[RMDB]
The record gives the reactivity of an RNA of 177 nucleotides to 2A3 and DMS. DMS adducts were read by reverse transcription with MarathonRT. The reactions ran in a buffer of 150 mM KOAc, 10 mM MgCl2 and 150 mM bicine (pH 8.5), at 24 C. Reactivities are given for positions 27 through 126. The DMS profile rests on 1,441 reads.

RNA sequence: GGGAACGACUCGAGUAGAGUCGAAAAUAUUUCAGAAUAACGGUGAACGUAAACAUCCGUACGCAAAUACGAAUUUGGAUGAGAUUGGUUCGAAUCAGCAAUCAGAUCAUAAGAUUGUCGAUGCUGAGGCUUUAUCUAACUUCGGUUAGAUAAAGCCAAAAGAAACAACAACAACAAC
Reactivity to 2A3 in 0.01 (KOAc 150mM, MgCl2 10mM, bicine 150mM(pH8.5), 24C), signal-to-noise 2, nucleotides 027 to 126: u150a070u030u150u040c060a040g090a220a090u130a030a090c040g140g000u120g030a060a000c040g040u200a000a130a080c000a010u010c000c030g030u070a060c080g020c080a130a040a100u190a130c030g120a050a090u180u150u180g030g050a030u020g000a000g020a050u030u180g060g020u120u020c010g010a000a050u010c010a010g000c000a020a140u020c010a060g030a070u000c000a070u060a300a120g050a040u000u020g040u110c110g040a000u020g000c020u010g000a020
Reactivity to DMS in 0.01 (KOAc 150mM, MgCl2 10mM, bicine 150mM(pH8.5), 24C), signal-to-noise 2, nucleotides 027 to 126: u010a090u010u000u010c050a120g010a100a090u020a070a060c080g050g010u000g000a130a030c040g050u030a070a180a160c060a030u000c010c040g000u010a060c080g010c080a140a170a190u000a050c070g020a140a070u000u000u000g000g010a020u000g020a100g000a140u020u000g010g010u000u010c010g020a070a200u000c030a010g010c000a040a050u000c030a110g000a030u010c030a140u010a060a120g000a030u010u000g000u030c150g000a140u000g000c010u000g000a070